The data come from the RNA Mapping Database (RMDB), library VIROID. The record gives the reactivity of an RNA of 177 nucleotides to DMS and 2A3. Reactivities are given for positions 27 through 126. As a SHAPE reagent, 2A3 marks flexible, mostly unpaired nucleotides at the ribose 2'-OH. The reactions ran in a buffer of 150 mM KOAc, 10 mM MgCl2 and 150 mM bicine (pH 8.5), at 24 C.
RNA sequence: GGGAACGACUCGAGUAGAGUCGAAAAGGGGAAGCAAGCAUCUCCUGUUCAGGGAUCCCCGGGGAAACCUGGACAGACCGGGCGGAGAAGCGCACGAGCGGGACCGUCUUCUGACAGGAGUAAUCCCGUACUGUUAGAAGUUCGCUUCUAACAGUACAAAAGAAACAACAACAACAAC
Reactivity to DMS in 0.01 (KOAc 150mM, MgCl2 10mM, bicine 150mM(pH8.5), 24C), signal-to-noise 5, nucleotides 027 to 126: g010g000g000g020a070a090g020c110a080a090g000c120a110u000c040u000c040c000u000g000u000u000c040a040g000g010g000a200u000c020c030c030c120g020g000g000g000a050a090a210c000c000u000g010g000a060c050a040g010a080c300c130g010g010g000c050g020g010a050g020a120a110g000c060g000c080a060c210g010a130g010c030g000g000g010a100c030c050g000u000c000u010u010c040u000g000a080c050a040g000g000a050g020u010a080a150u000c000c020c030
Reactivity to 2A3 in 0.01 (KOAc 150mM, MgCl2 10mM, bicine 150mM(pH8.5), 24C), signal-to-noise 3, nucleotides 027 to 126: g000g000g010g020a040a010g080c100a070a000g030c020a160u020c020u020c000c020u010g030u090u060c020a020g060g020g000a060u060c000c010c010c030g060g000g020g000a030a040a010c000c000u020g010g030a020c010a010g000a010c020c030g040g000g000c020g010g030a090g030a100a040g110c020g030c040a050c140g080a040g030c020g020g040g010a030c010c010g020u000c000u090u020c030u040g030a020c040a030g020g040a020g030u040a030a070u020c030c000c010